This 177-nucleotide RNA was probed chemically with DMS and 2A3. For 2A3, 1,432 sequencing reads were counted. The RNA was probed in 150 mM KOAc, 10 mM MgCl2 and 150 mM bicine (pH 8.5) at 24 C. Reactivities are given for positions 27 through 126.
RNA sequence: GGGAACGACUCGAGUAGAGUCGAAAACUCAAUAUUUGCCAAAUAUUUACCAGCGUAUUGUUUAAUGACAUUAAUAAUCUCUUGAUUGGUUAUUGUUUUAUCAACCAAUAAAGCAAUAUCUCGGUUACUAAUGAUGCAUGUUCGCAUGCAUCAUUAGAAAAGAAACAACAACAACAAC
Reactivity to DMS in 0.01 (KOAc 150mM, MgCl2 10mM, bicine 150mM(pH8.5), 24C), signal-to-noise 2, nucleotides 027 to 126: c040u000c050a080a030u000a060u000u000u000g030c120c090a060a080a060u010a070u000u000u010a060c060c080a090g020c240g010u010a000u000u000g010u000u000u000a070a070u000g000a020c030a070u010u010a050a060u010a080a110u010c070u010c150u000u000g000a050u000u000g020g000u000u000a010u000u000g000u000u000u000u000a040u000c090a050a120c250c120a050a060u000a030a020a050g010c010a000a010u010a000u000c020u000c090g020g000u000u010a160
Reactivity to 2A3 in 0.01 (KOAc 150mM, MgCl2 10mM, bicine 150mM(pH8.5), 24C), signal-to-noise 2, nucleotides 027 to 126: c020u000c040a040a090u070a080u140u150u170g150c020c020a050a080a020u080a100u120u180u120a090c010c000a000g040c020g050u010a040u060u090g040u030u050u090a090a070u070g010a010c000a010u110u080a140a050u120a090a050u060c070u020c020u160u170g080a060u040u030g030g030u020u030a040u040u060g060u000u130u060u040a120u100c050a010a100c030c010a040a010u080a040a020a000g030c000a010a000u000a020u000c070u040c080g030g030u060u010a050